[RMDB]
RNA sequence: GGGAACGACUCGAGUAGAGUCGAAAAACAUGGCGGUGACAUACACCGGAAAACCGUAGAGAUACGGUCCGCCUUGUAGUCGGUGUACAGGUGGUGCAAGCCUGUCGUCAGGUAAUGUCGUACGCUGAGAUAUAUUGUAAUUCGUUACAAUAUAUCUAAAAGAAACAACAACAACAAC
Reactivity to DMS in 0.01 (KOAc 150mM, MgCl2 10mM, bicine 150mM(pH8.5), 24C), signal-to-noise 8, nucleotides 027 to 126: a080c070a080u030g010g010c000g000g010u010g000a040c040a060u010a070c100a060c010c000g000g000a030a050a090a050c000c010g010u000a000g000a230g000a200u000a000c000g000g000u010c010c020g000c050c010u010u030g010u040a090g010u010c020g000g000u010g010u030a030c020a020g010g010u000g000g000u040g020c180a100a210g000c010c010u010g000u000c040g010u010c030a040g000g000u010a050a030u000g000u000c010g000u010a240c010g000c010u000g000
Reactivity to 2A3 in 0.01 (KOAc 150mM, MgCl2 10mM, bicine 150mM(pH8.5), 24C), signal-to-noise 6, nucleotides 027 to 126: a000c050a050u090g020g000c000g000g010u070g010a000c000a010u080a010c030a020c010c000g000g010a050a070a000a010c000c000g000u000a010g010a000g000a040u010a000c000g000g000u000c000c010g020c000c000u020u140g080u040a030g030u030c020g000g000u020g000u010a010c000a000g000g010u020g010g060u130g070c050a030a010g000c000c000u000g000u010c010g020u020c040a020g010g010u030a040a010u020g000u010c010g010u030a040c010g000c020u020g010
The record gives the reactivity of an RNA of 177 nucleotides to DMS and 2A3. The 2A3 profile rests on 25,998 reads. 2A3 adducts were read by reverse transcription with SuperScript II with manganese. The RNA was probed in 150 mM KOAc, 10 mM MgCl2 and 150 mM bicine (pH 8.5) at 24 C.